RNA sequence: GGGAACGACUCGAGUAGAGUCGAAAAGCACAUAAACUGCCUACGGCAUGAGUAGCAGCGCCAUGUGAAAAUGUCGGAAAGCUAGGCUGGAGAGCAAAAAUUCGACCCAAACAGUUUUAGCUGUGGACCAACAGGAUCGAUUCGUCGAUCCUGUUGGAAAAGAAACAACAACAACAAC
Reactivity to DMS in 0.01 (KOAc 150mM, MgCl2 10mM, bicine 150mM(pH8.5), 24C), signal-to-noise 2, nucleotides 027 to 126: g010c000a120c130a150u010a030a080a140c150u000g000c040c030u040a180c020g020g000c020a000u000g010a030g000u000a090g010c000a030g000c200g000c210c110a100u000g000u010g010a060a060a210a000u000g000u000c000g000g000a090a050a120g050c090u010a040g000g000c000u010g000g000a170g030a030g000c060a030a010a040a140a070u010u010c000g000a100c000c050c000a040a070a100c050a000g030u000u010u000u040a100g000c030u000g000u000g000g000a240
Reactivity to 2A3 in 0.01 (KOAc 150mM, MgCl2 10mM, bicine 150mM(pH8.5), 24C), signal-to-noise 3, nucleotides 027 to 126: g030c000a050c010a100u150a120a160a040c030u060g010c020c010u050a020c000g000g000c010a010u000g010a000g000u000a000g000c000a010g020c000g190c090c080a110u000g010u000g050a000a010a000a000u010g000u010c000g010g010a110a050a000g040c030u010a000g030g000c010u010g040g040a070g010a000g050c100a020a120a090a000a000u080u090c050g040a070c000c000c000a020a050a020c010a020g010u010u010u050u300a040g030c030u040g020u050g040g070a080
Conditions: 150 mM KOAc, 10 mM MgCl2 and 150 mM bicine (pH 8.5), 24 C.
The record gives the reactivity of an RNA of 177 nucleotides to DMS and 2A3.
It was measured as part of the RMDB libraries RFM100 and RFMREP.